An RNA of 177 nucleotides, treated with DMS and read out base by base. The reactions ran in a buffer of 150 mM KOAc, 10 mM MgCl2 and 150 mM bicine (pH 8.5), at 24 C. The DMS profile rests on 514 reads.
[RMDB]
RNA sequence: GGGAACGACUCGAGUAGAGUCGAAAAGAUAUGGAGCGUGAACUACGCUGAACCGGCGCUGAUGACCUGUCUUAGCUCGGAAACGAGCUAAGACAGCAAGGCGUCAAAAGCGCACGCUCCUAAGUCAUCCGUUAACAUUCUUCGGAAUGUUAACGGAAAAAGAAACAACAACAACAAC
Reactivity to DMS in 0.01 (KOAc 150mM, MgCl2 10mM, bicine 150mM(pH8.5), 24C), signal-to-noise 1, nucleotides 027 to 126: g020a050u000a300u000g000g030a000g000c000g020u020g000a120a110c300u050a300c020g000c000u000g000a120a150c290c170g000g000c000g140c000u000g000a090u140g000a000c300c060u000g020u000c000u000u000a000g020c000u000c000g000g000a030a030a300c020g030a000g000c000u000a000a000g020a030c000a000g110c000a030a300g000g030c000g060u020c000a120a030a300a000g000c000g020c080a050c000g020c000u000c020c000u000a000a030g000u000c020a150